[RMDB]
RNA sequence: GGGAACGACUCGAGUAGAGUCGAAAAGAACGCUUCGACGAGAUAUAUAUAGAAUGAUCGAGACUCGAAAACCGCUGAAAGAGGAUCGUUCGAAAAGAAUAGCGGUGAAACUGGUCGUAGCGAGAAAGGCAAUUGAAUAGUUCGCUAUUCAAUUGCCAAAAGAAACAACAACAACAAC
Reactivity to DMS in 0.01 (KOAc 150mM, MgCl2 10mM, bicine 150mM(pH8.5), 24C), signal-to-noise 3, nucleotides 027 to 126: g020a180a120c000g010c000u000u000c000g010a020c010g000a000g000a090u040a050u020a110u030a080u010a140g000a010a050u030g000a010u000c010g010a150g020a300c020u010c020g000a070a070a190a040c000c000g010c000u000g010a040a100a170g010a050g000g000a020u000c010g010u000u020c000g000a070a110a080a090g010a060a060u010a060g000c000g010g000u010g000a080a080a120c030u000g000g000u000c000g000u010a000g000c000g020a100g000a060a050a080
Reactivity to 2A3 in 0.01 (KOAc 150mM, MgCl2 10mM, bicine 150mM(pH8.5), 24C), signal-to-noise 4, nucleotides 027 to 126: g050a100a000c010g000c010u010u020c020g010a000c040g050a000g030a000u060a010u000a000u020a000u030a230g070a070a080u040g020a010u010c030g020a020g230a290c000u010c020g030a050a040a050a070c010c000g000c010u060g060a160a160a060g040a060g020g000a010u010c010g010u020u010c040g020a100a100a040a040g130a040a060u050a080g000c000g000g020u010g010a050a080a000c010u040g040g000u000c000g010u000a000g000c020g000a010g080a030a020a010

Source information:
The record gives the reactivity of an RNA of 177 nucleotides to DMS and 2A3. It was measured as part of the RMDB library OK1LIB. The DMS profile rests on 4,944 reads. For DMS the reverse transcriptase was MarathonRT. 2A3 adducts were read by reverse transcription with SuperScript II with manganese. Conditions: 150 mM KOAc, 10 mM MgCl2 and 150 mM bicine (pH 8.5), 24 C.